[RMDB]
RNA sequence: GGGAACGACUCGAGUAGAGUCGAAAAGAUAUGGAUCAGACUGUAGGCUAUAAGGCGUUGAAAUCGGAAACGAUGGAGCCUUGAUAGCCCGUCUGAUCCUAAGUCAAAACACACGUUCGCGUGUGAAUCCAUCUACAGUGUUCGCACUGUAGAUGGAAAAAGAAACAACAACAACAAC
Reactivity to DMS in 0.01 (KOAc 150mM, MgCl2 10mM, bicine 150mM(pH8.5), 24C), signal-to-noise 4, nucleotides 027 to 126: g010a040u000a300u000g000g010a000u000c000a020g000a020c000u010g070u000a080g050g010c000u000a000u010a030a010g010g010c000g020u010u020g000a080a140a020u000c030g010g000a120a110a170c020g010a020u000g000g000a120g010c010c000u000u000g000a020u000a010g010c010c000c030g000u000c000u000g000a010u000c000c000u000a010a060g000u010c020a090a090a160a200c000a010c010a020c000g010u000u020c230g020c010g040u000g020u000g010a070a100
Reactivity to 2A3 in 0.01 (KOAc 150mM, MgCl2 10mM, bicine 150mM(pH8.5), 24C), signal-to-noise 3, nucleotides 027 to 126: g020a020u080a020u140g010g010a000u000c010a010g010a010c040u180g220u300a090g090g000c010u010a010u000a020a000g010g000c040g210u300u050g020a040a050a000u010c000g010g050a060a070a040c000g010a000u020g000g010a010g000c030c000u010u010g050a000u010a010g000c020c000c000g000u000c000u000g000a000u000c000c000u010a000a010g000u010c020a050a030a130a030c010a000c000a000c010g020u080u080c300g010c010g140u000g000u000g020a000a050
Description:
Structure probing data (DMS and 2A3) for a 177-nucleotide construct. The RNA was probed in 150 mM KOAc, 10 mM MgCl2 and 150 mM bicine (pH 8.5) at 24 C. It was measured as part of the RMDB library TTRDEL. 2A3 adducts were read by reverse transcription with SuperScript II with manganese.